Chemical mapping of a 207-nucleotide RNA with 2A3 and DMS.

RNA sequence: GGGAACGACUCGAGUAGAGUCGAAAAACUUAGGUUGAUUCCAUAUCUUGGCUAUUGUGAAUAGUAUUGCAGUGAACAUGGGAAUGCAGAUAUCUCUUUGAUAUACUGAUGUCUUUCCUUUUGGAUAUGCCCAGCAGUCAAAUUGCUGGAUCAUAUACUGGUAAAAUACGUUCGCGUAUUUUACCAGAAAAGAAACAACAACAACAAC
Reactivity to 2A3 in 0.01 (KOAc 150mM, MgCl2 10mM, bicine 150mM(pH8.5), 24C), signal-to-noise 3, nucleotides 027 to 156: a010c060u090u130a050g060g070u030u040g080a140u130u000c020c020a030u050a070u110c030u050u090g050g000c010u020a020u100u110g070u030g090a100a080u070a090g050u060a070u060u140g000c020a030g010u030g110a110a010c040a110u050g020g000g020a050a040u100g010c000a010g000a050u010a020u020c070u000c020u140u120u180g020a010u020a020u050a260c020u010g050a090u110g090u000c030u020u030u030c000c000u070u150u090u120g050g010a030u020a010u030g010c050c010c000a000g000c010a010g060u170c070a120a180a180u150u040g000c000u020g000g010a010u040c010a000u050a010u010a080
Reactivity to DMS in 0.01 (KOAc 150mM, MgCl2 10mM, bicine 150mM(pH8.5), 24C), signal-to-noise 3, nucleotides 027 to 156: a020c040u010u000a060g000g010u000u000g000a200u010u010c020c000a080u000a080u020c040u000u000g040g020c040u000a050u010u000g030u030g030a120a090u010a070g010u000a300u000u000g010c050a150g020u000g000a050a100c040a090u000g000g000g000a060a100u000g020c040a050g010a060u000a030u000c010u010c130u000u010u000g010a180u000a100u000a090c040u020g000a080u010g020u000c010u000u000u000c000c010u000u010u000u010g020g010a060u000a020u000g000c130c010c000a040g020c000a050g010u000c120a090a110a240u010u000g000c000u000g020g010a020u000c030a000u000a010u000a280
Source: RMDB library OK3TST, as collected in RNAgym. Conditions: 150 mM KOAc, 10 mM MgCl2 and 150 mM bicine (pH 8.5), 24 C. Values cover nucleotides 27 to 156. For 2A3 the reverse transcriptase was SuperScript II with manganese. For DMS the reverse transcriptase was MarathonRT.